Structure probing data (2A3 and DMS) for a 177-nucleotide construct. For 2A3 the reverse transcriptase was SuperScript II with manganese. The reactions ran in a buffer of 150 mM KOAc, 10 mM MgCl2 and 150 mM bicine (pH 8.5), at 24 C. The DMS profile rests on 2,176 reads.
[RMDB]
RNA sequence: GGGAACGACUCGAGUAGAGUCGAAAAAUAAUAUUGGCCAUUCGCUUCUUCCUGUUUUAGUUUGCGCUUAGUGGCAAGUUUACUGUCUGACAUAAACAGUAUGUCCUAGAUGAUGGAAAAGCGAACAUACCAUGGGGAGGUUCGCCUCCCCAUGGUAAAAAGAAACAACAACAACAAC
Reactivity to 2A3 in 0.01 (KOAc 150mM, MgCl2 10mM, bicine 150mM(pH8.5), 24C), signal-to-noise 1, nucleotides 027 to 126: a000u220a090a010u090a140u210u100g080g040c010c000a000u020u000c000g000c000u030u050c050u140u050c020c010u050g090u060u000u000u090a010g010u040u060u060g050c290g010c150u120u140a030g000u120g220g000c020a000a010g060u130u060u090a030c060u000g060u040c050u030g050a100c030a140u190a050a190a020c000a020g000u010a020u060g030u020c010c010u000a040g020a050u120g030a000u030g020g000a040a010a000a000g000c010g000a010a030c030a040
Reactivity to DMS in 0.01 (KOAc 150mM, MgCl2 10mM, bicine 150mM(pH8.5), 24C), signal-to-noise 3, nucleotides 027 to 126: a060u000a060a100u010a300u010u010g030g010c030c030a270u010u000c020g000c020u000u000c170u000u000c010c010u000g000u000u000u000u000a030g020u000u000u000g010c040g010c080u000u000a120g070u020g020g010c000a030a050g010u010u000u000a020c040u000g000u000c050u000g000a160c250a140u040a050a120a030c040a030g000u000a010u000g000u020c220c010u000a060g010a060u000g010a060u000g000g000a020a000a030a020g000c010g000a010a030c230a170